[RMDB]
RNA sequence: GGGAACGACUCGAGUAGAGUCGAAAAGAUCUGCGCCGAUCCGAAACGCUAGCAAACAGCCCGCAUCAUGUCGUCUCCUAACUUCGACGUGGUGAGAUACUGAGCUUAUGCGAGUAAGCCUGUUAGCAAUAGAUCAGAACGUUCGCGUUCUGAUCAAACUUGGUCUGGAGUUCGCUCCAGACCAAGUAAAAGAAACAACAACAACAAC
Reactivity to 2A3 in 0.01 (KOAc 150mM, MgCl2 10mM, bicine 150mM(pH8.5), 24C), signal-to-noise 1, nucleotides 027 to 156: g020a020u010c010u080g070c060g020c140c040g040a130u030c050c000g110a080a110a000c020g000c050u050a020g010c040a020a060a050c030a030g020c050c010c020g000c000a010u040c020a010u020g010u010c020g030u010c020u060c090c100u200a180a200c100u110u060c000g010a010c000g040u020g010g010u000g030a040g010a000u140a110c060u010g020a000g010c000u050u000a040u120g040c040g040a030g070u010a000a030g040c030c070u080g020u080u060a030g000c000a000a180u040a190g000a000u000c000a000g000a000a020c000g030u100u070c220g000c000g120u000u010c030u000g000a000u000c000a000a000
This 207-nucleotide RNA was probed chemically with 2A3. For 2A3 the reverse transcriptase was SuperScript II with manganese.